[RMDB]
An RNA of 207 nucleotides, treated with 2A3 and read out base by base. 2A3 adducts were read by reverse transcription with SuperScript II with manganese. Conditions: 150 mM KOAc, 10 mM MgCl2 and 150 mM bicine (pH 8.5), 24 C.
RNA sequence: GGGAACGACUCGAGUAGAGUCGAAAAGGGGUCUAAUUGUCAGGGUGCUUGGAUUUACAGCUGCUCUGAAGCCUCCACGGAGCAUCAGGCUGUUGUCAGCACCCUUGGAUUUAUUAGACGGAGGCACCCAAAACAUUUUAGCUUCGGCUAAAAUGAACGAAUAUGCGAUGUUCGCAUCGCAUAUUCGAAAAGAAACAACAACAACAAC
Reactivity to 2A3 in 0.01 (KOAc 150mM, MgCl2 10mM, bicine 150mM(pH8.5), 24C), signal-to-noise 1, nucleotides 027 to 156: g160g010g000g000u020c020u010a030a010u040u020g050u040c050a070g000g000g000u030g000c060u120u220g240g090a270u290u260u230a160c000a010g010c000u070g000c000u030c010u050g040a040a060g000c000c000u040c000c000a000c010g000g000a000g000c020a060u220c160a130g060g090c030u010g030u150u100g080u080c000a030g000c040a000c000c000c000u000u070g000g000a000u000u190u160a040u000u050a020g000a000c000g000g000a000g020g010c000a020c030c010c000a030a080a010a000c000a000u000u000u000u000a000g000c010u000u020c300g060g020c000u000a000a000a000a000u030g000a060a010